Source: RMDB library RFM100, as collected in RNAgym.
The record gives the reactivity of an RNA of 177 nucleotides to DMS and 2A3.
The RNA was probed in 150 mM KOAc, 10 mM MgCl2 and 150 mM bicine (pH 8.5) at 24 C.
DMS adducts were read by reverse transcription with MarathonRT.
The DMS profile rests on 2,054 reads.
As a SHAPE reagent, 2A3 marks flexible, mostly unpaired nucleotides at the ribose 2'-OH.
In probing experiments dimethyl sulfate is read out at A N1 and C N3, which are open when not base-paired.
For 2A3, 1,136 sequencing reads were counted.
[RMDB]
RNA sequence: GGGAACGACUCGAGUAGAGUCGAAAAAAAAAAGGUAAAAAGAAAAAUCUAUUCACUGAACUUGCCGAUAGAAUUUGCAAAUGUGUCAAGUGCAUCAAGGAGAAGAUAGAGGAGAAACUCGAUUAGGGUUAUACUAAGCGUUCGCGCUUAGUAUAACAAAAGAAACAACAACAACAAC
Reactivity to DMS in 0.01 (KOAc 150mM, MgCl2 10mM, bicine 150mM(pH8.5), 24C), signal-to-noise 1, nucleotides 027 to 126: a000a010a000a080a040a170g000g010u050a010a030a030a040a050g020a040a080a060a030a030u010c040u010a010u010u000c010a030c020u010g000a070a030c030u000u000g000c000c060g010a040u030a080g000a040a170u010u000u010g000c030a010a040a050u030g010u020g000u040c030a010a040g000u000g000c060a020u010c040a060a030g000g000a060g000a040a040g000a060u020a040g000a020g000g010a080g000a080a050a050c050u010c030g010a160u030u010a070g020g020
Reactivity to 2A3 in 0.01 (KOAc 150mM, MgCl2 10mM, bicine 150mM(pH8.5), 24C), signal-to-noise 2, nucleotides 027 to 126: a000a000a000a000a000a000g060g000u140a160a070a000a040a020g080a030a220a050a010a010u000c010u020a070u040u130c040a010c040u070g050a040a020c000u010u020g000c010c000g020a010u030a030g090a030a090u000u040u090g030c010a020a030a000u100g040u030g070u100c070a140a050g020u010g040c030a040u020c040a110a020g040g010a030g040a070a000g030a040u160a090g010a020g000g030a010g120a070a060a030c060u050c010g020a030u020u110a070g120g030